[RMDB]
RNA sequence: GGGAACGACUCGAGUAGAGUCGAAAAUGAUCGAGAGAUCUAACGAUGUACGCGAGUCAAUAGCACAGACUCGAGCGAAAGCUCGGUCGAAAGACCGCGUACAUCGGUCGGCAAGUGUAAAGUCAAAACUAUAGGCUCACUUCGGUGAGCCUAUAGUAAAAGAAACAACAACAACAAC
Reactivity to DMS in 0.01 (KOAc 150mM, MgCl2 10mM, bicine 150mM(pH8.5), 24C), signal-to-noise 3, nucleotides 027 to 126: u010g000a020u010c000g000a300g000a250g000a000u000c000u000a090a090c020g000a010u000g000u000a000c000g000c000g020a060g040u000c000a030a100u000a140g000c150a090c200a170g000a010c000u000c010g000a010g010c000g010a100a090a180g000c000u000c000g010g020u000c010g020a100a100a110g010a020c000c000g010c000g000u000a000c000a000u000c000g000g030u000c060g000g000c080a040a080g010u000g000u000a060a080a060g000u000c040a070a090a130

Record summary: Conditions: 150 mM KOAc, 10 mM MgCl2 and 150 mM bicine (pH 8.5), 24 C. This 177-nucleotide RNA was probed chemically with DMS. Reactivities are rounded to 0.1 and cut off at 0 and 3.